Chemical mapping of a 207-nucleotide RNA with 2A3. The data come from the RNA Mapping Database (RMDB), library RSTRND. The RNA was probed in 150 mM KOAc, 10 mM MgCl2 and 150 mM bicine (pH 8.5) at 24 C.
RNA sequence: GGGAACGACUCGAGUAGAGUCGAAAACCGACGCCGAGAUCGAGGCCUUCUUUGCUGAAGAGGCUGCCGCUCUCGUCUGAAGGAACCAGCCUGGCUCAGCGUGCUGCUGUGCAGCGGCCAGGCUUCAUCUCUAACAGCAGCGAACGGACAUGAGGGAGUAGGCAGUAUACUUCGGUAUACUGCCUACAAAAGAAACAACAACAACAAC
Reactivity to 2A3 in 0.01 (KOAc 150mM, MgCl2 10mM, bicine 150mM(pH8.5), 24C), signal-to-noise 1, nucleotides 027 to 156: c000c000g010a030c000g050c030c020g000a010g000a030u040c000g010a040g040g030c000c000u160u050c040u030u020u150g170c130u230g060a000a000g000a000g000g000c030u040g300c300c000g000c030u000c000u000c000g010u000c040u030g180a130a040g000g000a020a020c000c000a000g000c000c000u000g000g000c030u050c120a020g030c010g100u100g000c000u020g000c040u040g000u060g030c000a000g000c030g000g000c000c000a000g000g000c010u000u010c000a000u060c050u020c000u030a000a000c000a000g030c000a000g020c000g030a040a000c110g020g130a000c060a290u190g030a100g000g060g000a140